[RMDB]
Chemical mapping of a 177-nucleotide RNA with DMS and 2A3.
RNA sequence: GGGAACGACUCGAGUAGAGUCGAAAAGCGGAUGAGUGGAUCGGCAGAAUCCAUCCACGUGGUGUUCCGGUUGGCGCUAUCAAUGAUAUUGCGCGCGCCCUGGACGAACCACAGGUCAAGGCGCGCACACUCCUCAUCCCUUCGGGGAUGAGGAGUGAAAAGAAACAACAACAACAAC
Reactivity to DMS in 0.01 (KOAc 150mM, MgCl2 10mM, bicine 150mM(pH8.5), 24C), signal-to-noise 3, nucleotides 027 to 126: g030c040g000g010a090u000g000a140g010u000g010g010a020u010c100g000g010c170a160g000a150a110u000c030c010a050u000c020c030a020c080g010u000g010g010u010g000u010u000c050c020g000g010u000u010g020g010c040g010c040u000a080u000c080a070a090u010g010a120u010a300u000u020g000c070g000c020g010c000g000c070c000c020u000g010g010a030c050g000a070a100c060c080a060c080a160g000g000u010c020a080a050g010g010c010g010c010g030c050a180
Reactivity to 2A3 in 0.01 (KOAc 150mM, MgCl2 10mM, bicine 150mM(pH8.5), 24C), signal-to-noise 2, nucleotides 027 to 126: g010c000g030g070a030u080g030a090g050u050g030g030a030u080c130g040g010c070a040g180a140a030u020c000c000a010u000c010c000a020c030g020u020g000g040u090g060u050u000c010c010g000g040u130u130g030g000c020g020c060u040a020u200c080a120a110u150g130a080u110a070u180u170g060c060g000c020g030c000g050c010c020c000u040g030g010a030c050g000a080a070c020c000a040c030a050g000g050u040c030a030a020g030g000c020g020c000g000c020a000
For DMS, 2,664 sequencing reads were counted.